RNA sequence: GGGAACGACUCGAGUAGAGUCGAAAAACAACAUGCCCAGGUAGCCCAGACCUUCAAGGCUACGGUGCGUUGCGACGCACGGUCUGAUUCUUCACAACAACGUUCACCGCGUCUUCUUCCAUCCCCCUCCAGCGCACGAAGUUCGCUUCGUGCGCAAGUACAAAGAAAACUUCGGUUUUCUUUGUACAAAAGAAACAACAACAACAAC
Reactivity to DMS in 0.01 (KOAc 150mM, MgCl2 10mM, bicine 150mM(pH8.5), 24C), signal-to-noise 1, nucleotides 027 to 156: a150c030a050a090c030a160u010g020c040c010c010a060g050g000u000a040g000c030c020c100a110g000a060c040c030u000u020c060a110a230g000g000c030u000a000c000g050g030u000g030c030g040u000u000g030c120g020a110c060g000c020a030c010g020g000u000c020u000g000a200u010u000c020u000u030c000a100c030a130a120c030a040a060c020g040u010u000c040a060c020c000g010c060g010u000c030u010u000c010u010u010c040c050a020u000c030c040c000c010c020u000c020c050a130g020c000g070c000a010c020g010a000a020g050u010u010c240g010c020u000u020c000g060u000g030c000g010c010a010a000
Reactivity to 2A3 in 0.01 (KOAc 150mM, MgCl2 10mM, bicine 150mM(pH8.5), 24C), signal-to-noise 1, nucleotides 027 to 156: a010c130a040a030c050a120u200g020c000c010c030a030g010g020u010a000g000c000c070c100a010g030a010c000c000u020u030c010a000a010g000g000c010u020a000c010g000g000u010g010c000g010u040u080g040c250g060a000c000g020c000a000c020g000g000u010c030u010g010a070u110u080c060u140u190c000a010c030a150a050c010a110a020c090g100u110u070c080a060c080c040g030c000g040u050c030u140u020c000u050u010c020c070a060u100c050c000c010c000c000u000c000c030a010g010c030g000c000a000c000g030a000a000g010u010u010c030g020c080u020u010c010g000u010g010c020g000c000a000a000

Conditions: 150 mM KOAc, 10 mM MgCl2 and 150 mM bicine (pH 8.5), 24 C. This 207-nucleotide RNA was probed chemically with DMS and 2A3. The DMS profile rests on 2,728 reads.